[RMDB]
RNA sequence: GGGAACGACUCGAGUAGAGUCGAAAACAUGGAGUUCCUGCGCGACGAGAACCACCCGCAGCGAGUGCAGCUGGGUCCGUCGCGGCUGCACUCCUUGGUAAGCGCCGGUCAGACCCACCGAUCGGCGGCCUGCUAAGAUGUUCGCAUCUUAGCAGGCAAAAGAAACAACAACAACAAC
Reactivity to DMS in 0.01 (KOAc 150mM, MgCl2 10mM, bicine 150mM(pH8.5), 24C), signal-to-noise 2, nucleotides 027 to 126: c080a030u000g010g010a120g010u000u000c080c010u010g000c010g040c020g000a030c010g000a230g020a030a060c080c090a190c140c020c040g000c050a020g000c210g000a110g020u000g020c000a040g020c100u020g030g010g020u010c050c020g010u000c000g020c010g000g020c010u000g010c080a020c000u000c000c040u000u000g020g000u000a120a110g030c040g000c000c000g040g020u010c000a040g000a090c020c000c000a150c190c020g010a010u000c010g000g020c010g010
Reactivity to 2A3 in 0.01 (KOAc 150mM, MgCl2 10mM, bicine 150mM(pH8.5), 24C), signal-to-noise 1, nucleotides 027 to 126: c020a030u090g030g020a030g040u060u040c020c000u000g000c020g020c000g010a040c000g020a030g050a300a040c050c020a040c020c060c030g010c050a030g020c050g100a140g140u130g030c000a020g000c040u060g000g010g050u000c000c010g030u000c010g000c020g030g020c000u000g000c060a000c000u010c020c000u050u030g070g000u100a120a030g050c010g020c030c000g000g000u010c010a030g010a220c000c000c030a060c000c040g000a010u000c010g000g020c000g010